[RMDB]
RNA sequence: GGGAACGACUCGAGUAGAGUCGAAAAUGGACUGCGUUCGCGCAGUCCAAAAGAAUAGACGUACACUAGCGUAGAAGUGUUCAGGUCACAUAACUACGCAAAAAAGCUGAGUGUUCGCACUCAGCAACUUUCAACAUCGGUUCGCCGAUGUUGAAAGAAAAGAAACAACAACAACAAC
Reactivity to 2A3 in 0.01 (KOAc 150mM, MgCl2 10mM, bicine 150mM(pH8.5), 24C), signal-to-noise 1, nucleotides 027 to 126: u030g000g000a000c000u000g040c010g010u050u050c120g000c000g070c100a010g010u000c000c000a000a020a000a000g020a010a030u160a030g070a040c050g020u140a010c080a030c100u030a050g030c020g000u030a020g020a130a030g010u030g000u060u110c080a070g070g200u110c040a020c000a050u040a040a030c000u000a010c000g000c000a020a060a000a000a050a010g000c010u000g000a000g000u020g010u060u060c210g000c060a010c000u020c000a000g010c000a020a000
Reactivity to DMS in 0.01 (KOAc 150mM, MgCl2 10mM, bicine 150mM(pH8.5), 24C), signal-to-noise 1, nucleotides 027 to 126: u040g010g010a000c020u010g000c010g020u000u030c190g000c000g070c000a020g040u000c000c000a000a010a050a080g020a050a040u000a020g030a080c090g000u000a130c190a070c120u000a110g000c010g030u000a000g010a110a260g010u000g000u000u010c100a110g010g000u000c030a070c050a040u050a040a230c010u000a000c000g020c020a000a000a100a050a090a090g040c000u000g010a040g020u000g010u000u000c240g020c000a000c000u000c000a000g000c000a000a020
Record summary: Structure probing data (2A3 and DMS) for a 177-nucleotide construct. For DMS the reverse transcriptase was MarathonRT. For 2A3 the reverse transcriptase was SuperScript II with manganese. For DMS, 985 sequencing reads were counted. Conditions: 150 mM KOAc, 10 mM MgCl2 and 150 mM bicine (pH 8.5), 24 C.